[RMDB]
RNA sequence: GGGAACGACUCGAGUAGAGUCGAAAAGAUAUGGACGUAGGGAGCUACUUAUGGGUCGGAAACGACCCAAUAGCAUCGAUCUACCGUCCUAAGUCAAAAUCUCUUCGUUCUUCGGAACGAAGAGAAAGUAACAGUGUCUGUUCGCAGACACUGUUACAAAAGAAACAACAACAACAAC
Reactivity to 2A3 in 0.01 (KOAc 150mM, MgCl2 10mM, bicine 150mM(pH8.5), 24C), signal-to-noise 2, nucleotides 027 to 126: g000a000u020a000u060g010g010a010c000g010u020a000g010g000g020a040g070c220u140a020c000u040u050a040u100g010g000g000u010c000g000g030a040a010a000c010g000a020c000c020c010a010a010u010a000g000c020a240u300c010g000a010u000c010u000a030c160c180g000u000c010c010u000a040a000g000u000c020a060a030a080a230u000c000u000c000u000u020c000g010u020u010c000u030u080c250g130g010a010a010c010g000a010a000g000a000g000a000a000a000
Reactivity to DMS in 0.01 (KOAc 150mM, MgCl2 10mM, bicine 150mM(pH8.5), 24C), signal-to-noise 2, nucleotides 027 to 126: g000a010u000a100u040g000g000a020c030g020u010a020g000g010g010a190g000c300u000a010c080u000u020a300u000g030g010g020u000c000g000g000a030a010a050c000g000a000c000c000c000a000a070u000a010g040c030a100u000c010g000a300u000c000u010a020c070c130g040u010c010c000u010a020a040g000u000c020a090a080a120a220u000c000u010c000u000u010c000g020u000u000c020u000u010c260g000g000a000a010c000g010a000a000g010a010g010a010a010a070
This 177-nucleotide RNA was probed chemically with 2A3 and DMS. High 2A3 reactivity points to a flexible backbone, as in loops and unpaired stretches. The DMS profile rests on 1,418 reads. For DMS the reverse transcriptase was MarathonRT.